[RMDB]
RNA sequence: GGGAACGACUCGAGUAGAGUCGAAAACAAUAGCUUGUAAGAAUGAUUCAUGCGUUUGUGUAUUAACUCGAGGUUUAAUUUCUAAAAUCUCAGCCUCCAAUGUAAUCGCAUCUUGAUAUAACAUAGCAGGACGUAAUUGUUUCGACAAUUACGUCCUAAAAGAAACAACAACAACAAC
Reactivity to 2A3 in 0.01 (KOAc 150mM, MgCl2 10mM, bicine 150mM(pH8.5), 24C), signal-to-noise 2, nucleotides 027 to 126: c020a030a070u070a020g020c000u070u060g020u110a110a070g070a190a120u160g130a060u060u080c080a030u050g060c030g060u050u090u000g000u010g000u000a060u190u080a140a060c050u050c090g010a020g020g020u050u070u140a060a060u070u280u010c170u160a090a030a000a070u050c080u040c100a030g010c000c000u000c020c000a080a050u140g030u080a080a000u020c030g070c020a020u000c070u030u120g020a010u030a000u030a150a020c020a030u150a010g000c050
Reactivity to DMS in 0.01 (KOAc 150mM, MgCl2 10mM, bicine 150mM(pH8.5), 24C), signal-to-noise 1, nucleotides 027 to 126: c080a060a060u010a190g020c060u000u000g010u030a110a130g000a070a120u070g000a070u010u000c010a040u000g040c100g000u000u000u010g040u010g010u030a080u010u000a110a100c070u000c210g010a010g000g000u000u000u000a120a070u020u000u010c150u000a090a020a040a080u000c040u000c060a000g000c060c040u000c040c070a130a020u040g010u010a090a000u000c010g070c040a010u000c040u000u000g000a080u000a250u000a070a130c030a040u010a060g040c150
This 177-nucleotide RNA was probed chemically with 2A3 and DMS.
DMS adducts were read by reverse transcription with MarathonRT.
It was measured as part of the RMDB library OK2TRN.
The DMS profile rests on 690 reads.